[RMDB]
RNA sequence: GGGAACGACUCGAGUAGAGUCGAAAAGUAGCUUAAUAAGAACACCUUAACUUAGGUUCGAGCAUUCAUAAUUCGACUCCGUUAAGGAUUAUGACUAAACCCCCAACGGAUGCUCUCUAGGAAUACAUCUGGUUUGCACUAGAGCUAAGACUAGACCGGUGAUAAUGUAGUUCGCUACAUUAUCACCAAAAGAAACAACAACAACAAC
Reactivity to DMS in 0.01 (KOAc 150mM, MgCl2 10mM, bicine 150mM(pH8.5), 24C), signal-to-noise 2, nucleotides 027 to 156: g020u000a070g020c030u000u000a070a150u010a090a130g020a070a070c030a070c080c030u000u010a070a120c050u000u000a060g010g000u000u000c040g000a080g030c040a180u000u010c020a080u000a050a100u000u000c010g000a100c090u010c080c060g040u000u000a100a150g020g000a040u000u010a030u000g020a110c150u000a060a120a100c020c020c010c100c050a020a070c040g000g000a030u010g010c010u000c040u000c050u000a070g000g000a090a110u020a040c040a050u000c030u020g030g000u010u010u000g020c100a150c040u000a050g020a050g080c030u000a070a130g010a180c020u000a110g010a070c130c110
Reactivity to 2A3 in 0.01 (KOAc 150mM, MgCl2 10mM, bicine 150mM(pH8.5), 24C), signal-to-noise 7, nucleotides 027 to 156: g090u090a020g010c020u080u080a080a030u190a300a140g060a090a030c050a100c070c020u120u110a160a170c090u140u180a070g010g030u040u050c040g020a010g000c010a040u020u010c000a000u010a010a000u010u000c000g000a010c010u000c000c000g000u000u000a000a000g000g000a000u000u000a000u000g010a010c050u120a080a130a130c010c020c000c020c030a000a000c000g000g000a000u010g010c010u010c000u000c000u010a010g020g040a020a030u050a080c020a100u070c060u110g060g030u060u040u050g020c030a020c020u000a000g000a000g000c010u010a020a000g040a060c090u080a040g070a100c040c080